[RMDB]
RNA sequence: GGGAACGACUCGAGUAGAGUCGAAAAUGUAAUGGACCUGAAACGCGAUGUUAAAGUAACACCAGGUACCAAGCACACUGAAGAACGUCCUAAAGUGCAGGUAAUACAGGCAGCAGACCCACUCGCAUAGUGCUAACAAGUUCGCUUGUUAGCACUAAAAAGAAACAACAACAACAAC
Reactivity to DMS in 0.01 (KOAc 150mM, MgCl2 10mM, bicine 150mM(pH8.5), 24C), signal-to-noise 4, nucleotides 027 to 126: u020g010u010a080a150u000g020g000a100c020c010u010g000a080a070a110c170g000c120g040a090u000g000u020u010a080a110a120g010u010a040a040c050a110c110c020a030g020g000u000a070c020c020a060a130g030c050a070c070a070c090u020g020a130a110g000a050a080c150g010u000c040c030u000a070a060a110g000u000g010c020a060g010g010u000a070a100u010a100c080a090g010g020c010a030g000c040a070g000a090c030c010c030a070c080u000c090g010c170a090
Reactivity to 2A3 in 0.01 (KOAc 150mM, MgCl2 10mM, bicine 150mM(pH8.5), 24C), signal-to-noise 2, nucleotides 027 to 126: u080g000u090a120a080u080g010g000a010c000c000u000g060a080a060a100c110g000c060g070a080u110g070u130u200a200a240a130g050u020a100a010c030a040c030c000a000g030g000u080a300c010c010a010a000g030c000a000c000a020c040u020g020a000a020g050a130a050c060g070u070c020c020u030a130a060a000g010u040g020c040a010g020g090u010a070a000u080a110c050a000g070g000c010a010g000c010a010g000a080c010c000c020a030c020u020c000g010c010a070
An RNA of 177 nucleotides, treated with DMS and 2A3 and read out base by base. 2A3 adducts were read by reverse transcription with SuperScript II with manganese. The data come from the RNA Mapping Database (RMDB), library OK2TST.